[RMDB]
RNA sequence: GGGAACGACUCGAGUAGAGUCGAAAAGAUAUGGAUGGAGCUGAUGGUGAAACCAUAUCGGAAACGAUAUGGGAGUAUGCCAUUCAGCGUUGAAAUCCUAAGUCAAAGCGUACGUUCGCGUACGCAACGAUCAAGAUGAGUUCGCUCAUCUUGAUCGAAAAGAAACAACAACAACAAC
Reactivity to 2A3 in 0.01 (KOAc 150mM, MgCl2 10mM, bicine 150mM(pH8.5), 24C), signal-to-noise 3, nucleotides 027 to 126: g040a020u090a050u200g010g010a010u000g000g000a020g020c010u010g000a010u010g010g020u030g000a000a010a000c010c000a010u000a000u000c000g030g000a070a050a000c020g000a000u000a000u010g010g010g010a000g020u000a010u300g000c030c000a010u070u040c000a010g000c010g010u020u010g010a010a010a010u000c000c010u030a210a020g080u050c070a120a060a030g010c000g000u000a000c010g020u030u110c300g000c020g120u000a000c000g000c000a000a000
Reactivity to DMS in 0.01 (KOAc 150mM, MgCl2 10mM, bicine 150mM(pH8.5), 24C), signal-to-noise 4, nucleotides 027 to 126: g000a020u000a300u000g010g000a010u000g000g000a150g010c020u000g000a010u000g010g010u000g000a210a210a170c000c000a010u000a000u000c000g010g000a140a060a140c000g020a010u000a000u000g000g000g010a060g000u000a050u020g000c010c000a000u000u000c010a000g010c000g000u010u000g000a080a090a030u000c000c000u010a030a140g010u000c040a120a090a120g000c010g020u000a000c000g020u000u000c250g010c020g020u000a000c010g010c000a020a010